[RMDB]
RNA sequence: GGGAACGACUCGAGUAGAGUCGAAAAAGCUAGGUUCAUCCAGGGACAAUUUCUGUCACAGAUGAUGUGACAGAAUUGAAGGGUAAGCAUGUUUGAGGUUUGUGCAAGAGAAUGAAUGAAGUUUUACACCAAGUAUUCUUAGCUAGAAGUGGGAAAAAAGGGUCUUAGAUUUCGAUCUAAGACCCUUAAAAGAAACAACAACAACAAC
Reactivity to DMS in 0.01 (KOAc 150mM, MgCl2 10mM, bicine 150mM(pH8.5), 24C), signal-to-noise 1, nucleotides 027 to 156: a110g030c020u010a020g000g030u000u010c040a100u030c000c030a060g010g000g000a190c030a100a030u000u000u000c000u030g000u000c000a040c000a030g060a270u000g000a240u000g060u020g000a030c000a010g040a000a010u020u010g010a190a190g010g020g030u000a110a170g030c020a060u000g000u000u000u000g010a150g120g020u000u010u000g020u000g080c080a110a140g020a080g030a040a040u030g020a100a100u000g010a080a200g020u010u000u000u000a080c040a100c000c050a030a110g010u000a010u000u000c020u000u000a070g060c060u000a120g000a060a100g000u000g020g000g000a030a050a100a080